[RMDB]
RNA sequence: GGGAACGACUCGAGUAGAGUCGAAAAGGGAUGUUGAGGUAGGCUCAGUAGAUGCGAGGAGAUCCACCAUUCCUCACAUCGUCUGUCCUAACUCGCCUUCCCAAAGACUAUCGGUUCGCCGAUAGUCCUACCGAUUAGGGUUCGCCCUAAUCGGUAGAAAAGAAACAACAACAACAAC
Reactivity to 2A3 in 0.01 (KOAc 150mM, MgCl2 10mM, bicine 150mM(pH8.5), 24C), signal-to-noise 4, nucleotides 027 to 126: g050g010g000a040u070g040u180u170g030a010g000g020u010a000g010g020c060u010c050a020g000u060a050g010a010u000g020c010g010a000g010g010a030g020a070u130c070c020a060c050c020a110u060u020c000c000u010c010a010c000a000u010c000g040u000c000u000g010u000c000c000u010a010a010c000u000c000g030c000c010u010u040c000c000c000a040a030a010g000a000c000u010a000u010c010g000g050u060u050c240g040c110c000g000a000u000a000g000u000c010
Reactivity to DMS in 0.01 (KOAc 150mM, MgCl2 10mM, bicine 150mM(pH8.5), 24C), signal-to-noise 4, nucleotides 027 to 126: g000g000g010a040u000g010u000u000g010a010g010g000u000a010g000g010c180u000c010a020g020u000a220g020a010u000g020c020g000a010g000g000a030g000a100u010c080c140a060c180c110a160u010u000c000c000u000c000a020c010a000u000c000g000u000c020u010g000u000c010c000u000a020a020c020u000c010g000c110c010u010u000c000c000c010a060a080a120g000a020c000u000a000u000c010g010g000u010u010c220g020c000c010g000a010u000a000g000u000c010

Source: RMDB library RFMREP, as collected in RNAgym. Chemical mapping of a 177-nucleotide RNA with 2A3 and DMS. The reactions ran in a buffer of 150 mM KOAc, 10 mM MgCl2 and 150 mM bicine (pH 8.5), at 24 C. 2A3 adducts were read by reverse transcription with SuperScript II with manganese. For 2A3, 10,031 sequencing reads were counted. For DMS the reverse transcriptase was MarathonRT.